Source: RMDB library OK2TST, as collected in RNAgym. An RNA of 177 nucleotides, treated with DMS and read out base by base. DMS (dimethyl sulfate) methylates the pairing face of unpaired adenines and cytosines. Reactivities are rounded to 0.1 and cut off at 0 and 3. Reactivities are given for positions 27 through 126.
RNA sequence: GGGAACGACUCGAGUAGAGUCGAAAACAAUGCAGAGACAUGGGAAGAACCACCAAAGGUCAUGAGGGUCUCUUCCAGGGAUCCCUGGACAUUGCCUUUCCCAGUGGUGUGACAAGAGUUAGAGGUGUACCCUGUUCCCGUUCGCGGGAACAGGGUAAAAAGAAACAACAACAACAAC
Reactivity to DMS in 0.01 (KOAc 150mM, MgCl2 10mM, bicine 150mM(pH8.5), 24C), signal-to-noise 1, nucleotides 027 to 126: c050a060a070u000g030c030a060g000a050g000a040c050a100u000g000g000g000a090a060g020a050a090c040c030a090c080c060a050a140a060g010g010u000c110a050u000g000a090g000g030g010u000c070u000c020u000u010c080c030a080g000g000g000a070u000c030c020c050u000g000g000a090c120a040u000u000g020c040c040u000u000u000c010c000c000a150g020u000g000g000u010g010u000g000a060c100a020a040g000a050g000u000u010a120g000a140g000g020u030g000